[RMDB]
This 177-nucleotide RNA was probed chemically with DMS and 2A3. For 2A3 the reverse transcriptase was SuperScript II with manganese. The RNA was probed in 150 mM KOAc, 10 mM MgCl2 and 150 mM bicine (pH 8.5) at 24 C.
RNA sequence: GGGAACGACUCGAGUAGAGUCGAAAACUGCCACGACUGAUGCUGGCGUCGUUGAUUGGUGCGCUGAUCCUCUGGCUUUCCGAUCAAAUCAUCCUCUGGCUGACUCGCGUGUGGAUGGAAGUGUCCAACACGACCUCGAAUUCGUUCGAGGUCGUGUAAAAGAAACAACAACAACAAC
Reactivity to DMS in 0.01 (KOAc 150mM, MgCl2 10mM, bicine 150mM(pH8.5), 24C), signal-to-noise 2, nucleotides 027 to 126: c090u000g020c040c040a060c100g000a100c070u010g000a110u000g020c040u000g010g000c130g000u000c040g030u000u000g010a040u000u010g000g010u000g020c120g020c060u000g020a060u010c030c040u000c070u000g020g010c030u000u000u000c010c030g000a060u000c080a050a050a070u010c080a060u000c020c040u010c050u010g020g020c030u000g010a090c090u000c100g000c020g020u000g010u020g010g000a080u000g000g010a040a060g000u000g010u020c020c060a100
Reactivity to 2A3 in 0.01 (KOAc 150mM, MgCl2 10mM, bicine 150mM(pH8.5), 24C), signal-to-noise 1, nucleotides 027 to 126: c040u080g020c020c010a050c050g010a060c110u130g030a130u170g050c070u010g020g050c040g010u000c030g030u020u090g060a140u050u090g000g010u090g010c080g010c000u000g030a100u020c000c020u020c010u000g050g000c010u000u010u030c050c010g000a060u090c040a030a080a050u050c040a030u010c000c010u030c030u050g070g000c000u030g030a040c030u040c050g040c040g080u110g030u070g010g010a040u080g020g000a040a070g050u080g100u140c020c000a040